RNA sequence: GGGAACGACUCGAGUAGAGUCGAAAAACUGAGUCGGCACCGAAGGAGAACCACACUCACAAUUACUAACAGUAUCCCCUGCCGCUGCUUGCUUGCCCGAAGGAUCGAGCAACUUCGUUGGUUGCCCGGAUAGAAAUAUGUUCGCAUAUUUCUAUCCAAAAGAAACAACAACAACAAC
Reactivity to 2A3 in 0.01 (KOAc 150mM, MgCl2 10mM, bicine 150mM(pH8.5), 24C), signal-to-noise 4, nucleotides 027 to 126: a000c040u050g000a000g050u030c000g010g010c060a020c030c020g030a040a030g080g040a060g010a060a010c020c010a020c020a010c030u050c010a060c040a090a110u140u110a070c040u090a180a080c030a060g040u060a170u110c020c000c000c000u020g020c010c030g000c010u010g010c000u030u040g020c010u030u080g010c000c000c010g000a040a020g040g000a050u110c050g020a010g070c000a000a020c010u140u120c050g080u070u100g020g020u020u020g000c000c000c020
Reactivity to DMS in 0.01 (KOAc 150mM, MgCl2 10mM, bicine 150mM(pH8.5), 24C), signal-to-noise 7, nucleotides 027 to 126: a090c060u000g010a060g020u000c050g010g010c140a090c050c030g010a110a090g000g010a070g010a070a070c060c060a040c080a070c040u000c050a070c090a080a070u000u000a080c090u010a060a090c110a070g000u000a080u010c030c010c010c060u000g010c060c040g010c060u010g010c040u000u000g010c050u000u000g010c020c020c020g010a080a090g000g010a080u000c060g000a060g010c020a030a030c040u000u000c150g010u000u000g000g010u000u000g010c010c040c050